[RMDB]
RNA sequence: GGGAACGACUCGAGUAGAGUCGAAAAAGGAGGGUUCCGUUUGUUGGUAUGACGGGUUAAGCUGUAAACUUAAUGACUAAUUAGUCGUCGAAGGUUCAAUUCCUUUCUCUCCUACCAGAUGGGCUCAACUGCAAUGUUCGCAUUGCAGUUGAGCCAAGGUGUAUUGAACCUUCGGGUUCAAUACACCAAAAGAAACAACAACAACAAC
Reactivity to 2A3 in 0.01 (KOAc 150mM, MgCl2 10mM, bicine 150mM(pH8.5), 24C), signal-to-noise 1, nucleotides 027 to 156: a000g050g000a040g000g020g020u130u090c000c040g000u020u040u070g120u040u010g010g100u270a060u070g000a010c000g000g010g000u020u000a020a010g060c030u040g240u300a050a090a040c000u000u010a020a000u010g020a000c010u010a040a220u220u200a150g040u020c020g070u030c000g000a020a000g000g010u000u060c000a000a010u000u020c000c000u000u020u000c020u020c000u000c020c000u020a150c010c010a020g080a250u220g060g000g050c000u000c000a010a010c000u000g000c000a000a000u020g040u070u110c160g010c110a010u020u010g000c000a020g000u000u000g040a000g020c000c000a000a000
Reactivity to DMS in 0.01 (KOAc 150mM, MgCl2 10mM, bicine 150mM(pH8.5), 24C), signal-to-noise 1, nucleotides 027 to 156: a090g040g010a030g030g020g000u000u020c010c050g010u000u000u020g030u000u000g020g000u050a080u000g000a030c070g030g020g000u000u000a010a000g070c000u010g010u020a100a100a080c020u000u000a040a030u010g020a090c030u000a090a110u010u010a110g020u020c030g000u010c020g020a120a050g020g020u010u000c030a140a300u010u000c000c000u000u000u000c030u000c010u010c010c010u010a150c100c000a130g020a090u000g020g030g100c000u000c000a010a010c000u050g000c000a000a010u000g030u000u000c300g040c020a120u000u000g000c000a010g020u000u000g000a000g050c000c000a000a010